[RMDB]
RNA sequence: GGGAACGACUCGAGUAGAGUCGAAAAGUUAUGCUCUCGCUGCCUAAUGGCGGUGCGGGAAACCCACUCUAAAGUCCUUAGGGUCAGCCCCUUAAGGCGGGGUUCGGAGGCACCUGGCAACAGAAGCUGAAACUGUGCACAUUCGUGUGCACAGUAAGAUGGUCACGCAUUUCGAUGCGUGACCAUCAAAAGAAACAACAACAACAAC
Reactivity to 2A3 in 0.01 (KOAc 150mM, MgCl2 10mM, bicine 150mM(pH8.5), 24C), signal-to-noise 2, nucleotides 027 to 156: g040u120u160a130u240g030c010u020c020u000c030g030c040u050g000c000c000u270a300a090u150g060g000c030g010g090u010g000c050g010g010g000a040a020a020c050c030c000a090c040u170c040u180a160a120a220g300u040c000c000u010u010a010g000g000g060u020c000a010g020c050c020c000c000u060u040a000a000g000g000c000g000g000g010g010u080u170c160g000g020a070g030g000c000a000c000c000u060g200g000c000a020a000c020a040g000a000a000g020c000u010g020a040a000a000c000u000g000u000g020c000a000c000a010u040u050c300g070u040g000u010g020c000a000c000a000g000u000a000a000
The record gives the reactivity of an RNA of 207 nucleotides to 2A3. For 2A3, 649 sequencing reads were counted. 2A3 adducts were read by reverse transcription with SuperScript II with manganese. The RNA was probed in 150 mM KOAc, 10 mM MgCl2 and 150 mM bicine (pH 8.5) at 24 C.